[RMDB]
RNA sequence: GGGAACGACUCGAGUAGAGUCGAAAAGGCACGAGGACGUGCCUGGUUUUGAGUGGGGGAGGAUGUUACGGACAAAUUCCGUAACCGUGUAGGCCAGCAUCAAAGAUGCGUACCAAGCUGCGUUUCAACCUGCGUGGGUUGAGGCGGCUUAGCGGAUUAGAGGUCAUAUGUUCGCAUAUGACCUCUAAAAAGAAACAACAACAACAAC
Reactivity to DMS in 0.01 (KOAc 150mM, MgCl2 10mM, bicine 150mM(pH8.5), 24C), signal-to-noise 1, nucleotides 027 to 156: g040g030c020a080c030g000a170g000g000a240c040g040u000g020c010c020u010g020g010u000u000u000u000g010a080g040u000g000g010g000g020g000a100g010g000a170u010g020u000u000a050c000g030g000a140c050a140a130a250u000u010c020c000g030u040a010a030c010c140g000u020g000u000a160g000g000c040c060a230g020c050a040u010c050a100a160a140g030a130u000g000c030g060u000a020c030c000a010a100g010c000u000g000c030g000u000u020u000c010a070a060c000c010u030g010c230g050u000g000g000g010u000u020g000a000g000g000c020g000g000c000u020u020a020g020c040g000g020a230u000
Reactivity to 2A3 in 0.01 (KOAc 150mM, MgCl2 10mM, bicine 150mM(pH8.5), 24C), signal-to-noise 2, nucleotides 027 to 156: g050g030c010a010c040g060a090g160g170a030c030g070u030g010c000c010u000g000g000u030u030u100u160g060a030g000u150g040g030g030g020g000a050g030g030a110u180g010u030u000a030c000g030g010a000c120a100a220a040u200u000c000c000g010u000a000a010c000c000g010u030g060u180a030g030g030c020c020a040g020c010a000u010c060a020a180a080g040a060u100g020c020g030u060a060c030c000a060a000g000c000u040g000c020g070u060u000u030c010a000a010c020c000u160g070c210g150u300g010g000g000u000u020g010a010g030g010c000g000g000c000u010u000a050g020c050g010g000a000u010
Background: An RNA of 207 nucleotides, treated with DMS and 2A3 and read out base by base. For 2A3 the reverse transcriptase was SuperScript II with manganese. The DMS profile rests on 2,979 reads. Conditions: 150 mM KOAc, 10 mM MgCl2 and 150 mM bicine (pH 8.5), 24 C. The data come from the RNA Mapping Database (RMDB), library VIROID.